[RMDB]
RNA sequence: GGGAACGACUCGAGUAGAGUCGAAAAAUGCUGAAGGAAAACAAAAAGUGUUCAAAUAAUCAUAACUUCUACAUUACAGGUUCUGUUUAGAUGCAGAACUAGAGGGGCCAGGGUAAAUGUAGAUAAAGAGAUAUAUAGCACCAUGCUUCUUAAUGCAAGCUAAAUAUGGUUUCGACCAUAUUUAGCUAAAAGAAACAACAACAACAAC
Reactivity to 2A3 in 0.01 (KOAc 150mM, MgCl2 10mM, bicine 150mM(pH8.5), 24C), signal-to-noise 3, nucleotides 027 to 156: a000u060g030c030u050g020a010a000g040g000a040a020a050a040c060a030a150a030a040a000g020u030g020u050u080c030a030a110a080u080a110a020u090c030a030u060a170a060c020u050u010c000u020a010c000a010u030u020a010c030a070g020g020u000u020c000u000g080u020u090u090a120g010a130u160g000c030a000g030a030a000c010u030a040g020a050g000g010g030g000c060c060a050g070g030g020u020a030a060a050u020g000u010a010g000a020u080a010a100a000g040a010g000a020u030a000u010a000u000a120g000c000a000c050c000a050u060g000c000u030u040c000u040u090a110a050u100g040c060a070
Reactivity to DMS in 0.01 (KOAc 150mM, MgCl2 10mM, bicine 150mM(pH8.5), 24C), signal-to-noise 2, nucleotides 027 to 156: a130u000g020c020u010g000a120a090g020g010a100a070a070a300c040a100a100a110a080a090g050u000g000u000u010c040a100a080a110u000a080a010u000c030a090u000a100a070c130u000u000c020u010a010c030a010u000u000a080c140a180g040g000u000u000c000u020g010u000u000u000a230g000a140u010g020c020a040g000a020a020c010u000a050g000a100g000g010g020g020c070c010a050g000g000g010u010a010a020a080u000g010u010a000g000a090u000a090a050a060g010a140g000a070u000a090u010a070u000a050g000c010a100c000c030a020u000g010c020u000u000c010u000u000a040a170u010g050c100a110
The record gives the reactivity of an RNA of 207 nucleotides to 2A3 and DMS. It was measured as part of the RMDB library OK3TST. The 2A3 profile rests on 1,737 reads. The reactions ran in a buffer of 150 mM KOAc, 10 mM MgCl2 and 150 mM bicine (pH 8.5), at 24 C. The DMS profile rests on 2,273 reads.